Overview:
Chemical mapping of a 177-nucleotide RNA with DMS and 2A3.
RNA sequence: GGGAACGACUCGAGUAGAGUCGAAAACGUUAGGGAAUUCGGCAAGUUAGUCCCGUACGUUCGCAAUAAGGGAUGCCUGCCUCGGAAAGAGGCAGGUCGCAGUGACUCGGACGCUCCAACUGUCUAGCUUUCACUACAAGUUCGCUUGUAGUGAAAGAAAAGAAACAACAACAACAAC
Reactivity to DMS in 0.01 (KOAc 150mM, MgCl2 10mM, bicine 150mM(pH8.5), 24C), signal-to-noise 3, nucleotides 027 to 126: c040g010u000u010a150g030g000g000a040a180u010u000c030g020g030c090a090a100g000u000u020a100g010u000c000c000c000g010u010a050c100g000u000u020c140g030c060a050a050u010a090a120g000g010g020a080u000g000c010c000u000g010c000c000u000c010g000g000a090a130a130g000a010g000g020c010a000g010g010u000c060g010c100a100g020u000g000a070c030u000c030g000g010a050c110g010c030u010c010c020a070a130c170u000g000u010c050u000a140g010
Reactivity to 2A3 in 0.01 (KOAc 150mM, MgCl2 10mM, bicine 150mM(pH8.5), 24C), signal-to-noise 3, nucleotides 027 to 126: c020g000u060u100a110g000g000g070a050a070u080u060c050g030g010c060a080a090g060u130u120a040g040u040c030c010c000g010u020a010c010g020u030u060c130g030c070a020a080u070a110a100g080g020g010a040u050g000c000c010u000g000c010c000u000c000g030g170a300a140a080g000a030g000g000c000a000g000g010u000c000g000c000a040g030u040g100a020c000u000c000g010g010a000c000g010c020u030c020c010a060a080c060u070g050u060c020u010a020g020

Record summary
Values cover nucleotides 27 to 126. The RNA was probed in 150 mM KOAc, 10 mM MgCl2 and 150 mM bicine (pH 8.5) at 24 C. Values are in units of 0.01, from 0 to 300, in steps of 10.